The data come from the RNA Mapping Database (RMDB), library OK3TST. This 207-nucleotide RNA was probed chemically with DMS and 2A3. For 2A3, 1,498 sequencing reads were counted.
RNA sequence: GGGAACGACUCGAGUAGAGUCGAAAAAUAGGAAUAAAAAUCAGCUGGGCGUGAUGGUGCACACCUGUAAUCACAGCUAGUUAGGAGGCUGAGGCACAAGAAUAGCUUGAACCUGAGAGGCAGAAGCUGUGAGCCGAGAUCAUACCACUGCACUCCAACUCAUACGUGAUUUCGAUCACGUAUGAGUAAAAGAAACAACAACAACAAC
Reactivity to DMS in 0.01 (KOAc 150mM, MgCl2 10mM, bicine 150mM(pH8.5), 24C), signal-to-noise 2, nucleotides 027 to 156: a170u000a060g000g000a210a120u000a050a000a100a090a170u000c010a060g020c040u000g040g010g030c060g030u000g000a070u000g010g010u010g020c080a090c050a040c010c000u000g030u000a030a100u020c050a050c020a020g010c040u000a080g020u000u000a050g030g000a020g010g040c020u000g000a030g000g040c040a110c030a040a130g000a130a110u000a050g010c060u000u000g000a070a060c020c020u000g010a090g020a040g020g010c040a060g010a110a110g000c010u000g050u000g010a100g000c030c060g000a050g000a120u000c020a050u000a070c050c000a080c060u000g000c070a130c030u000c020c040a120
Reactivity to 2A3 in 0.01 (KOAc 150mM, MgCl2 10mM, bicine 150mM(pH8.5), 24C), signal-to-noise 2, nucleotides 027 to 156: a000u060a050g040g020a030a040u090a060a100a070a000a010u110c030a010g030c060u040g000g030g010c050g010u020g020a040u020g010g030u070g010c030a000c020a010c060c020u010g030u120a040a010u030c020a010c000a010g000c010u020a020g070u150u040a030g010g030a020g020g000c040u040g020a000g060g020c020a010c030a070a040g060a100a080u110a030g070c030u020u070g040a050a030c000c020u090g030a030g000a020g090g010c000a010g020a070a040g000c030u060g010u030g030a010g030c020c020g030a040g030a030u050c020a010u030a060c010c020a020c050u030g000c030a040c040u040c000c010a020

2A3 adducts were read by reverse transcription with SuperScript II with manganese. Reactivities are rounded to 0.1 and cut off at 0 and 3. 2A3 is a SHAPE reagent: it acylates the 2'-hydroxyl of flexible nucleotides of all four kinds.